[RMDB]
RNA sequence: GGGAACGACUCGAGUAGAGUCGAAAAUGCUAAACAAGCUGUUGAUGCAUUCAAUCAUCAAUUCAUGGAUGCACAUUUGAAGCUACCACAUACCGUUGGUAUUAACCAAUGGUCAGGGGGUUGGCACCAACACGACUACGUUCGCGUAGUCGUGUUGAAAAGAAACAACAACAACAAC
Reactivity to 2A3 in 0.01 (KOAc 150mM, MgCl2 10mM, bicine 150mM(pH8.5), 24C), signal-to-noise 4, nucleotides 027 to 126: u080g000c030u110a150a050a060c030a120a010g020c020u010g100u120u060g040a260u020g010c000a010u020u010c020a020a090u100c050a040u040c040a090a250u300u130c040a060u100g000g000a010u010g010c000a000c030a040u110u080u260g080a050a010g000c010u050a080c000c030a020c000a080u290a010c000c010g020u000u010g000g000u040a140u220u190a140a030c000c000a000a000u010g000g010u050c050a060g050g000g030g000g060u040u050g030g030c030a040c060
Reactivity to DMS in 0.01 (KOAc 150mM, MgCl2 10mM, bicine 150mM(pH8.5), 24C), signal-to-noise 4, nucleotides 027 to 126: u020g000c020u010a070a060a130c160a120a070g000c030u030g000u000u020g000a140u000g000c000a030u000u000c030a070a140u000c140a150u010c280a080a110u010u010c200a120u000g000g010a010u000g010c020a030c050a050u000u000u000g010a080a020g040c000u000a210c020c000a050c050a140u000a030c020c000g030u000u000g000g000u000a130u010u010a060a040c000c000a010a000u000g000g000u010c090a150g010g020g010g010g030u000u000g010g020c020a080c200
Chemical mapping of a 177-nucleotide RNA with 2A3 and DMS. Conditions: 150 mM KOAc, 10 mM MgCl2 and 150 mM bicine (pH 8.5), 24 C. For DMS the reverse transcriptase was MarathonRT. The data come from the RNA Mapping Database (RMDB), library OK2TRN. Reactivities are given for positions 27 through 126.